[RMDB]
RNA sequence: GGGAACGACUCGAGUAGAGUCGAAAACGACUUACCUUCGGGUAAGUCGACAUAGGUGAGUUCAUCGGAUAGCUGCCUUGGUGAGUUCAUCGGAUAGCUGCCACAUGUAACGGUUCGCCGUUACAAAAUCGAGAAGGUGUUUCGACACCUUCUCGAUAAAAGAAACAACAACAACAAC
Reactivity to DMS in 0.01 (KOAc 150mM, MgCl2 10mM, bicine 150mM(pH8.5), 24C), signal-to-noise 2, nucleotides 027 to 126: c020g000a010c000u000u000a000c000c010u010u010c190g020g020g010u000a000a010g000u010c010g000a020c130a040u010a070g020g010u010g000a020g000u000u000c030a020u000c010g000g020a120u000a050g000c070u000g010c060c030u000u000g020g010u010g000a080g000u000u000c070a030u000c010g010g020a090u000a040g010c090u000g020c050c030a110c190a130u000g000u000a000a010c010g000g010u010u010c220g030c000c000g000u000u000a000c010a010a030a080
Reactivity to 2A3 in 0.01 (KOAc 150mM, MgCl2 10mM, bicine 150mM(pH8.5), 24C), signal-to-noise 2, nucleotides 027 to 126: c010g010a000c000u000u000a000c010c000u010u080c260g040g000g020u010a000a000g000u010c010g010a000c010a060u170a040g030g010u040g060a010g010u010u000c030a020u000c050g030g050a050u070a100g050c100u130g080c040c040u050u180g000g030u040g040a010g030u000u010c010a010u000c000g010g020a050u090a030g050c050u070g030c000c010a050c020a090u110g000u010a000a010c010g000g080u040u050c190g000c020c000g000u000u000a000c000a010a030a000